[RMDB]
RNA sequence: GGGAACGACUCGAGUAGAGUCGAAAAGGUACUCGCGACAUCGCUGACGCUGUAACUGCAGCUGGCGUUGAAGUGGCUAAGAGCGAAGUUCGUCUGCCGAACGGCGUUCUGCGUACCACUGGCGAAAGCUCGCAGGAGUGUUCGCACUCCUGCGAGCAAAAGAAACAACAACAACAAC
Reactivity to DMS in 0.01 (KOAc 150mM, MgCl2 10mM, bicine 150mM(pH8.5), 24C), signal-to-noise 2, nucleotides 027 to 126: g000g050u010a100c140u010c060g030c040g010a300c060a040u000c010g020c010u010g020a070c200g010c010u000g010u000a070a150c300u040g010c010a050g000c030u000g010g000c000g030u000u010g010a080a130g030u000g000g040c070u010a140a010g000a030g010c000g010a020a080g000u000u000c040g000u000c210u010g030c260c000g000a000a010c000g000g040c000g020u000u000c000u000g010c260g000u000a060c030c000a040c040u000g000g000c000g000a050a050a150
Reactivity to 2A3 in 0.01 (KOAc 150mM, MgCl2 10mM, bicine 150mM(pH8.5), 24C), signal-to-noise 1, nucleotides 027 to 126: g100g050u030a080c000u000c020g020c020g030a030c030a030u010c010g030c020u040g120a090c120g000c000u020g050u100a300a120c110u240g000c020a000g000c010u050g000g010c000g000u010u030g070a060a010g010u040g000g030c020u080a040a010g000a030g000c000g000a000a010g010u000u000c020g020u060c200u280g140c120c010g000a000a000c010g000g000c000g030u000u030c000u020g000c020g000u000a030c010c000a020c080u020g080g000c050g040a060a020a020